[RMDB]
RNA sequence: GGGAACGACUCGAGUAGAGUCGAAAAAAAACAGAGCGAGAGAGAUGCCAGGGGUAUGGGGCGCCGGGGGCUCCCUGAAGGUCACCAUUCUGCAGAGCAGUGACAGCCGGGCCUUUAGCACUGUACCAUUCAAAGCUGGAUUCGUCCAGCUUUGAAUAAAAGAAACAACAACAACAAC
Reactivity to DMS in 0.01 (KOAc 150mM, MgCl2 10mM, bicine 150mM(pH8.5), 24C), signal-to-noise 2, nucleotides 027 to 126: a010a010a010a020c060a010g000a080g040c000g000a070g000a120g000a100g000a180u020g010c080c020a070g010g000g000g000u000a080u010g000g020g030g000c060g000c110c070g090g020g000g000g000c010u000c030c010c000u000g050a080a070g010g010u000c020a020c060c060a210u000u060c020u020g000c130a030g000a100g000c100a100g010u000g000a060c030a070g020c080c050g000g000g020c020c010u010u010u020a100g020c050a080c020u000g000u030a140c040c050
Reactivity to 2A3 in 0.01 (KOAc 150mM, MgCl2 10mM, bicine 150mM(pH8.5), 24C), signal-to-noise 2, nucleotides 027 to 126: a000a000a000a000c080a010g090a030g040c060g000a030g000a010g000a000g020a040u100g030c000c000a020g000g030g030g020u070a080u140g020g000g010g000c040g000c000c020g030g030g040g010g030c020u050c010c000c000u020g030a040a010g160g000u010c010a010c050c000a050u110u070c010u130g100c080a060g020a030g140c070a000g010u020g070a040c000a000g080c020c010g010g000g000c000c000u020u010u010a000g010c010a000c030u020g010u030a050c010c010
The record gives the reactivity of an RNA of 177 nucleotides to DMS and 2A3. Reactivities are given for positions 27 through 126. The reactions ran in a buffer of 150 mM KOAc, 10 mM MgCl2 and 150 mM bicine (pH 8.5), at 24 C. 2A3 adducts were read by reverse transcription with SuperScript II with manganese. DMS adducts were read by reverse transcription with MarathonRT.